[RMDB]
RNA sequence: GGGAACGACUCGAGUAGAGUCGAAAAUACAGAUGAGCGCAUCAGGGUACAAGUCUCCUGUUCGGCGCACGCUGAGCGUGUUAUGAGCGUGUUCGGAUCCAGCCGGCCCGGAAGACCAGGAGCACCCUACGGGAUAAGCUUUCGAGCUUAUCCCGUAAAAAGAAACAACAACAACAAC
Reactivity to 2A3 in 0.01 (KOAc 150mM, MgCl2 10mM, bicine 150mM(pH8.5), 24C), signal-to-noise 4, nucleotides 027 to 126: u180a030c050a020g110a080u110g050a090g100c080g000c110a110u060c050a050g000g030g000u080a110c030a090a010g030u040c000u010c000c000u000g020u020u050c010g010g010c060g000c040a020c020g000c000u120g050a120g100c020g060u150g060u270u200a140u160g080a040g000c000g000u020g060u030u090c000g020g040a020u040c040c010a010g080c000c020g020g000c010c010c010g000g010a080a070g060a060c020c010a010g010g020a000g000c010a020c000c000c010
Reactivity to DMS in 0.01 (KOAc 150mM, MgCl2 10mM, bicine 150mM(pH8.5), 24C), signal-to-noise 3, nucleotides 027 to 126: u040a050c090a050g000a070u000g010a100g040c050g020c020a090u020c060a080g000g020g000u000a090c130a040a080g020u030c000u000c000c010u000g000u000u000c030g000g060c100g000c070a000c070g030c000u000g010a070g000c040g010u000g010u010u020a130u020g020a090g010c040g010u000g000u010u020c030g000g000a060u060c080c080a140g000c060c060g000g000c170c050c050g000g000a050a130g000a020c110c030a000g000g000a010g010c090a070c010c010c010
The data come from the RNA Mapping Database (RMDB), library OK1LIB. Chemical mapping of a 177-nucleotide RNA with 2A3 and DMS. DMS adducts were read by reverse transcription with MarathonRT. The reactions ran in a buffer of 150 mM KOAc, 10 mM MgCl2 and 150 mM bicine (pH 8.5), at 24 C.